[RMDB]
RNA sequence: GGGAACGACUCGAGUAGAGUCGAAAAGAUAUGGAUGAAUACAAGAGGGUCGACCUAAGCUCGCCCUAUUCGGAAACGAAUAGGGAAACGCUUAGGUCGACCUACCCACCUUGUUCAUCCUAAGUCAGCUUUGUUAAUUGUUCGCAAUUAACAAAGCAAAAGAAACAACAACAACAAC
Reactivity to DMS in 0.01 (KOAc 150mM, MgCl2 10mM, bicine 150mM(pH8.5), 24C), signal-to-noise 2, nucleotides 027 to 126: g010a040u000a300u000g000g040a050u020g000a090a080u010a110c000a020a000g010a210g000g000g000u010c000g000a000c010c000u000a020a010g020c020u030c300g000c000c000c020u000a010u000u010c000g000g000a150a110a270c000g010a020a010u010a050g020g000g000a030a040a030c230g010c000u000u000a000g000g000u000c000g000a000c020c000u000a000c100c050c120a300c090c010u000u000g010u000u010c000a000u000c000c000u000a030a090g000u000c110a110

This 177-nucleotide RNA was probed chemically with DMS.
The reactions ran in a buffer of 150 mM KOAc, 10 mM MgCl2 and 150 mM bicine (pH 8.5), at 24 C.